RNA sequence: GGGAACGACUCGAGUAGAGUCGAAAACUGUUCUUUUCAGUUUAAUCUCUGAAAGUGUUCUAAGGAACACAACAUUGAUUAAUCUCAUUUUUGGAUCUCGUGGCAAGGCCUCUGUGCUUGCGCAUGCGCCCUCACAGCCAUUCGUGGCUGUGAGGGCAAAAGAAACAACAACAACAAC
Reactivity to 2A3 in 0.01 (KOAc 150mM, MgCl2 10mM, bicine 150mM(pH8.5), 24C), signal-to-noise 2, nucleotides 027 to 126: c000u000g040u010u070c070u010u240u110u150c040a000g000u000u020u000a010a000u010c010u020c000u000g050a120a120a050g010u000g000u000u000c060u060a160a150g190g000a000a000c000a000c000a010a010c000a020u000u000g000a000u030u000a010a030u000c020u000c140a080u000u040u130u160u010g040g140a080u000c050u040c010g000u000g150g000c000a010a110g250g000c000c000u180c110u190g030u080g000c000u000u000g010c080g030c000a000u040g070c090